The record gives the reactivity of an RNA of 177 nucleotides to DMS. High DMS reactivity at an A or C suggests that its Watson-Crick edge is free. The DMS profile rests on 1,344 reads. Conditions: 150 mM KOAc, 10 mM MgCl2 and 150 mM bicine (pH 8.5), 24 C. It was measured as part of the RMDB library TTRDEL. Reactivities are rounded to 0.1 and cut off at 0 and 3.
[RMDB]
RNA sequence: GGGAACGACUCGAGUAGAGUCGAAAAGAUAUGGAGAGCGCCACGCAGCAACAGCUCGGAAACGAGACAUGCUGGUGGGCGCUCUCCUAAGUCAAAAGUUUUUGGGAUCUUCGGAUCCCAAAAACAAGAUGUCUAUCGUGUUCGCACGAUAGACAUCAAAAGAAACAACAACAACAAC
Reactivity to DMS in 0.01 (KOAc 150mM, MgCl2 10mM, bicine 150mM(pH8.5), 24C), signal-to-noise 2, nucleotides 027 to 126: g010a040u000a300u010g000g000a020g000a020g030c000g000c020c020a050c010g010c020a010g010c010a020a080c220a190g000c000u000c000g000g020a110a180a180c010g000a000g000a020c100a280u000g020c000u010g000g000u000g020g010g010c000g020c000u000c020u020c000c020u010a010a090g000u010c040a080a100a120a110g000u000u000u000u000u010g000g000g000a000u010c000u010u000c180g000g020a020u000c000c000c000a000a000a000a000a000c030a070a120